[RMDB]
RNA sequence: GGGAACGACUCGAGUAGAGUCGAAAAAUUCUGUGAAAAAGGCUGAAAGGGGAGCGUCGCCGAAGCAAAUAAAACCCCAUCGGUAUUAUUUGCUGGCCGUGCAUUGAAUAAAUGUAAGGCUGUCAAGGUAAUAAUGGAUCUUCGGAUCCAUUAUUACAAAAGAAACAACAACAACAAC
Reactivity to DMS in 0.01 (KOAc 150mM, MgCl2 10mM, bicine 150mM(pH8.5), 24C), signal-to-noise 3, nucleotides 027 to 126: a090u000u000c040u000g010u020g010a030a080a090a090a090g010g010c020u020g010a030a070a120g000g010g000g000a070g000c090g020u010c050g010c040c030g000a100a030g000c010a010a010a010u000a000a020a080a020c020c010c190c300a100u020c170g020g010u000a050u000u000a020u000u000u000g010c010u010g010g010c010c020g010u000g000c000a000u000u000g010a140a070u010a080a010a010u000g000u000a030a090g010g010c000u010g010u010c150a050a070g000
Reactivity to 2A3 in 0.01 (KOAc 150mM, MgCl2 10mM, bicine 150mM(pH8.5), 24C), signal-to-noise 2, nucleotides 027 to 126: a010u130u070c030u040g090u060g050a060a070a020a100a110g080g030c050u050g060a180a030a040g030g030g000g000a000g000c000g050u060c010g010c030c040g090a050a000g000c010a010a030a020u040a020a070a030a030c010c030c040c060a100u110c050g020g010u030a040u110u030a040u000u010u050g010c040u050g020g030c000c000g010u000g000c000a000u000u060g060a160a050u170a210a050a010u000g020u000a030a040g000g000c000u010g080u050c060a050a050g080

The record gives the reactivity of an RNA of 177 nucleotides to DMS and 2A3. The reactions ran in a buffer of 150 mM KOAc, 10 mM MgCl2 and 150 mM bicine (pH 8.5), at 24 C. For DMS, 2,912 sequencing reads were counted.